Source: RMDB library TTRINS, as collected in RNAgym. This 177-nucleotide RNA was probed chemically with DMS. Values cover nucleotides 27 to 126. The DMS profile rests on 1,899 reads. DMS adducts were read by reverse transcription with MarathonRT. The RNA was probed in 150 mM KOAc, 10 mM MgCl2 and 150 mM bicine (pH 8.5) at 24 C.
[RMDB]
RNA sequence: GGGAACGACUCGAGUAGAGUCGAAAAGAUAUGGAUUAGCGAGGAUCUACCUGGGGAACACGGACUUUGAUCAGGCUCGGAAACGAGCCUGGGAGUCCGUGUUCCGGUAGGGAGCUAAUCCUAAGUCCACGUAAGGUAGGUUCGCCUACCUUACGUGAAAAGAAACAACAACAACAAC
Reactivity to DMS in 0.01 (KOAc 150mM, MgCl2 10mM, bicine 150mM(pH8.5), 24C), signal-to-noise 1, nucleotides 027 to 126: g010a110u010a300u000g010g020a010u000u000a020g010c010g020a090g000g000a020u000c000u000a000c010c020u010g070g040g020g000a020a000c010a030c010g010g020a030c010u000u020u010g010a150u020c010a020g010g010c000u010c000g030g010a100a120a300c020g010a010g000c000c000u010g000g000g000a010g000u000c000c000g020u000g030u000u000c000c010g000g010u000a000g010g010g010a020g020c010u000a020a010u010c000c000u010a020a160g000u000c020